[RMDB]
RNA sequence: GGGAACGACUCGAGUAGAGUCGAAAAGCUGGCGUUACGGGCCUGGCACUAUGACGAGAAUCAUUACAGUGGCGCAAUAUGGCUGCUCUAUGUCAUGAUCCUGGUAUGGGGCGCUGACUCCGGCGCAAAUCAUCCAUACAUUCGUGUAUGGAUGAUUAAAAGAAACAACAACAACAAC
Reactivity to DMS in 0.01 (KOAc 150mM, MgCl2 10mM, bicine 150mM(pH8.5), 24C), signal-to-noise 9, nucleotides 027 to 126: g010c070u000g010g010c040g010u000u010a090c130g010g010g010c040c020u010g020g030c050a070c060u000a040u000g000a040c030g010a080g000a090a080u000c030a020u000u000a050c080a040g020u010g010g010c020g000c040a100a140u010a110u010g010g010c030u010g020c010u010c070u010a090u010g010u000c060a030u010g000a050u010c040c030u000g000g020u000a030u000g000g000g000g010c030g010c040u000g000a050c060u000c030c030g010g010c010g020c080a070
Reactivity to 2A3 in 0.01 (KOAc 150mM, MgCl2 10mM, bicine 150mM(pH8.5), 24C), signal-to-noise 8, nucleotides 027 to 126: g030c020u030g020g010c020g040u060u090a060c060g040g040g000c010c020u050g080g020c040a010c050u100a070u160g080a020c050g050a010g050a090a040u030c010a010u020u050a030c010a040g080u050g100g000c030g010c060a080a080u200a130u290g200g010c040u080g020c000u050c000u070a130u050g010u010c000a010u040g020a030u040c000c010u020g020g000u030a040u070g030g010g010g000c120g010c030u010g010a030c010u000c020c000g020g000c020g000c020a010
This 177-nucleotide RNA was probed chemically with DMS and 2A3. For DMS the reverse transcriptase was MarathonRT. The data come from the RNA Mapping Database (RMDB), library OK2TST.